Structure probing data (DMS and 2A3) for a 177-nucleotide construct. Reactivities are rounded to 0.1 and cut off at 0 and 3. DMS adducts were read by reverse transcription with MarathonRT. The data come from the RNA Mapping Database (RMDB), library OK2TST. The RNA was probed in 150 mM KOAc, 10 mM MgCl2 and 150 mM bicine (pH 8.5) at 24 C. For 2A3 the reverse transcriptase was SuperScript II with manganese.
RNA sequence: GGGAACGACUCGAGUAGAGUCGAAAACUUGUAAGGUCCAGUCGUACGAGCAGCGUCAUGACAUCUCUCACGUUGGCAAAGUCAUGUGCGUUUCUGACGUGACACGUGGUAACGGUAUUACCCACCGAAUCUGCACCCGAUUCGUCGGGUGCAGAUUAAAAGAAACAACAACAACAAC
Reactivity to DMS in 0.01 (KOAc 150mM, MgCl2 10mM, bicine 150mM(pH8.5), 24C), signal-to-noise 1, nucleotides 027 to 126: c070u000u000g000u000a120a040g020g040u000c020c000a120g040u000c050g030u030a040c130g020a130g010c060a090g050c110g050u000c060a010u000g000a070c070a070u020c040u000c050u000c050a100c090g020u000u000g030g010c120a010a130a130g000u010c030a030u000g010u010g000c020g000u000u000u020c010u040g040a110c010g020u000g020a010c090a040c100g020u000g000g010u000a120a130c050g000g010u000a260u000u000a100c060c000c000a140c040c070g000
Reactivity to 2A3 in 0.01 (KOAc 150mM, MgCl2 10mM, bicine 150mM(pH8.5), 24C), signal-to-noise 1, nucleotides 027 to 126: c030u040u150g160u160a100a030g100g000u040c010c020a010g000u040c010g000u070a030c040g010a050g060c070a020g060c000g040u010c030a030u030g010a010c010a090u020c070u000c030u000c030a060c140g110u070u120g060g040c160a160a050a010g030u010c000a020u050g050u090g030c030g000u040u050u000c010u040g010a030c010g000u040g030a030c030a010c110g080u030g030g100u120a090a040c050g000g020u030a050u030u120a080c000c000c000a000c030c000g050